[RMDB]
RNA sequence: GGGAACGACUCGAGUAGAGUCGAAAAGAUAAGGUUGGCUAUUUUUAGACUUGAUUAAACGUUUUGCUUUUAGCUUUUUAAAUACAUCUAAGGAACAAUCAGAUAGCACGAAACCUUCUCGUGUAUACCAUUUAGUGCAUUUCGAUGCACUAAAUGGAAAAGAAACAACAACAACAAC
Reactivity to DMS in 0.01 (KOAc 150mM, MgCl2 10mM, bicine 150mM(pH8.5), 24C), signal-to-noise 2, nucleotides 027 to 126: g010a070u000a060a050g000g020u010u000g050g010c040u000a010u000u000u040u020u000a060g010a110c060u000u000g000a270u000u010a040a040a070c300g000u010u010u010u010g010c020u000u000u000u010a020g010c050u000u000u000u000u000a030a050a010u010a060c180a050u020c020u000a030a010g000g000a040a090c110a070a060u020c100a080g010a050u000a050g020c020a050c070g000a060a040a090c020c030u000u000c080u000c020g020u010g020u000a090u010a130
Reactivity to 2A3 in 0.01 (KOAc 150mM, MgCl2 10mM, bicine 150mM(pH8.5), 24C), signal-to-noise 3, nucleotides 027 to 126: g010a030u060a000a030g000g050u020u040g030g020c010u030a060u030u060u020u060u190a080g000a150c010u010u080g050a040u110u060a110a100a010c070g070u040u030u130u120g030c030u120u140u050u150a030g020c030u100u060u060u040u170a070a150a040u110a030c020a020u000c030u110a020a040g050g020a180a000c020a050a000u020c010a000g020a040u030a020g000c040a020c190g130a030a030a020c020c000u050u020c020u010c010g040u080g030u040a080u020a120
This 177-nucleotide RNA was probed chemically with DMS and 2A3. The DMS profile rests on 2,173 reads. For DMS the reverse transcriptase was MarathonRT. The reactions ran in a buffer of 150 mM KOAc, 10 mM MgCl2 and 150 mM bicine (pH 8.5), at 24 C.